Background: An RNA of 207 nucleotides, treated with 2A3 and read out base by base.
RNA sequence: GGGAACGACUCGAGUAGAGUCGAAAACGGAUUCGACGACGGUAUCGAACCCUUAGGUGCAUGCCGAGGGCGUAGUGGUUCUCGUUAAUCAAAACACUACAAACCUAUUAGUUGCCACAUUGACAACUACUGGAAGUGCAAACGACGAGUUCUUUGAACAAUCCCAUGAGUUCGCUCAUGGGAUUGUAAAAGAAACAACAACAACAAC
Reactivity to 2A3 in 0.01 (KOAc 150mM, MgCl2 10mM, bicine 150mM(pH8.5), 24C), signal-to-noise 1, nucleotides 027 to 156: c030g060g020a170u030u070c020g010a010c010g010a000c110g140g030u140a010u070c020g030a050a070c020c000c000u070u160a150g020g010u100g090c160a180u230g020c000c000g010a020g000g000g100c030g000u000a040g050u010g000g010u070u020c030u000c030g010u040u190a060a040u140c060a010a010a030a030c030a000c000u000a010c000a130a160a060c000c000u050a060u070u050a100g020u000u000g000c010c010a150c050a300u050u170g050a100c020a030a000c000u100a000c010u030g010g020a100a040g000u020g090c000a170a200a040c180g060a060c100g020a050g170u000u000c000u030u000u010g050a160

Values cover nucleotides 27 to 156. Source: RMDB library ARCHII, as collected in RNAgym. Conditions: 150 mM KOAc, 10 mM MgCl2 and 150 mM bicine (pH 8.5), 24 C. As a SHAPE reagent, 2A3 marks flexible, mostly unpaired nucleotides at the ribose 2'-OH.